[RMDB]
RNA sequence: GGGAACGACUCGAGUAGAGUCGAAAAGCAUACAACUUCGGUUGUAUGCAACGACAGAGUUGACUGUCAUAAACAACGUAACUUGUGAGUUACAAUAACACAUUGCAGCAGCUUUCGAGCUGCUGAAACGUGUUCCCAUAUUCGUAUGGGAACACGUAAAAGAAACAACAACAACAAC
Reactivity to 2A3 in 0.01 (KOAc 150mM, MgCl2 10mM, bicine 150mM(pH8.5), 24C), signal-to-noise 3, nucleotides 027 to 126: g010c000a000u000a010c000a010a000c010u040u070c180g110g010u010u010g000u000a010u010g010c000a000a000c040g010a000c010a010g020a010g040u030u030g090a180c020u000g010u020c020a030u120a030a150a020c030a020a000c080g020u010a020a000c020u100u150g120u100g280a050g040u010u010a010c030a030a060u190a130a020c130a020c050a130u070u300g020c010a030g000c000a000g030c000u040u030u180c240g090a020g000c000u000g000c000u010g000a000a000
Reactivity to DMS in 0.01 (KOAc 150mM, MgCl2 10mM, bicine 150mM(pH8.5), 24C), signal-to-noise 3, nucleotides 027 to 126: g010c020a020u000a010c000a000a010c000u000u000c230g030g010u000u010g000u010a010u000g000c000a040a060c160g010a000c010a000g030a120g010u000u000g000a180c000u000g010u000c090a120u020a090a080a070c160a050a050c090g000u000a040a020c070u000u000g020u010g000a090g010u000u000a000c040a110a070u000a070a040c110a040c130a060u000u010g010c000a000g020c000a010g010c000u000u000u020c180g010a000g010c000u000g030c000u000g000a020a060